[RMDB]
RNA sequence: GGGAACGACUCGAGUAGAGUCGAAAACGUCAAGGACUGUAUUGGUUCUAAAGGCACGGGUCUAUGGUCUGCGCAGGAAGCGCUAGAGGUUGGUGUACCCGCACCAAGUCUAAACAUGGCUGUGUUACGCUGACUGACCUUUCGAGGUCAGUCAGCGAAAAGAAACAACAACAACAAC
Reactivity to 2A3 in 0.01 (KOAc 150mM, MgCl2 10mM, bicine 150mM(pH8.5), 24C), signal-to-noise 1, nucleotides 027 to 126: c060g090u070c080a110a100g000g050a040c060u130g040u300a220u180u300g040g010u060u000c030u070a100a080a150g100g000c010a020c050g040g080g000u030c080u220a040u020g090g040u010c020u030g000c010g000c010a150g020g300a270a020g040c010g000c020u030a010g000a010g050g100u010u040g000g000u040g000u040a000c010c000c030g010c000a000c020c000a020a000g010u000c000u090a070a050a070c010a010u070g050g000c020u030g050u000g000u050u010a030
Reactivity to DMS in 0.01 (KOAc 150mM, MgCl2 10mM, bicine 150mM(pH8.5), 24C), signal-to-noise 1, nucleotides 027 to 126: c140g000u020c170a140a110g020g000a020c020u000g030u030a170u030u010g000g000u020u000c000u000a090a130a090g000g010c020a010c040g010g010g000u000c030u000a060u000g000g000u010c090u000g030c020g030c030a120g060g020a110a210g000c030g000c030u000a040g000a030g000g000u010u000g000g000u000g030u010a110c040c080c070g000c050a010c000c010a020a010g010u000c050u000a050a160a060c060a080u000g000g000c020u000g000u010g010u010u000a110